[RMDB]
RNA sequence: GGGAACGACUCGAGUAGAGUCGAAAAUUUUUUUUAGCUAUCGCAUACUCUUCGGAGUAUGGUCGAAAGACCGAGAUCUCGAACAGCACCAAGAGAUCUAGCGGUGCUGUUUUAAUUCCCAGAAAAAGGGAUUCACGCUCUUCGGGGCGUGGGUCCCAAAAGAAACAACAACAACAAC
Reactivity to 2A3 in 0.01 (KOAc 150mM, MgCl2 10mM, bicine 150mM(pH8.5), 24C), signal-to-noise 9, nucleotides 027 to 126: u140u050u020u000u000u000u020u070a010g000c060u100a010u050c010g000c010a000u000a000c000u000c010u020u070c280g070g000a000g000u000a000u010g000g000u000c000g040a070a010a010g000a000c000c000g010a010g000a020u010c010u020c030g050a130a070c040a100g140c050a070c070c030a110a040g010a000g000a020u020c020u020a030g010c000g000g000u000g000c000u000g010u000u020u000u000a030a070u020u020c010c010c000a010g140a010a070a010a010a010
Reactivity to DMS in 0.01 (KOAc 150mM, MgCl2 10mM, bicine 150mM(pH8.5), 24C), signal-to-noise 8, nucleotides 027 to 126: u000u010u010u010u000u030u010u020a020g010c010u020a020u000c010g000c010a030u000a000c000u000c000u000u060c170g010g000a010g010u000a000u000g010g000u000c000g010a120a080a110g000a010c000c000g000a020g000a010u000c010u000c020g010a120a170c190a100g020c150a080c130c090a100a180g000a040g000a020u000c020u000a010g000c030g010g010u000g000c010u000g000u000u000u000u000a070a100u000u000c000c000c000a130g010a040a060a050a120a120
This 177-nucleotide RNA was probed chemically with 2A3 and DMS.
Values cover nucleotides 27 to 126.
For 2A3, 38,723 sequencing reads were counted.
For DMS, 41,185 sequencing reads were counted.
Source: RMDB library OK1LIB, as collected in RNAgym.
2A3 adducts were read by reverse transcription with SuperScript II with manganese.
The RNA was probed in 150 mM KOAc, 10 mM MgCl2 and 150 mM bicine (pH 8.5) at 24 C.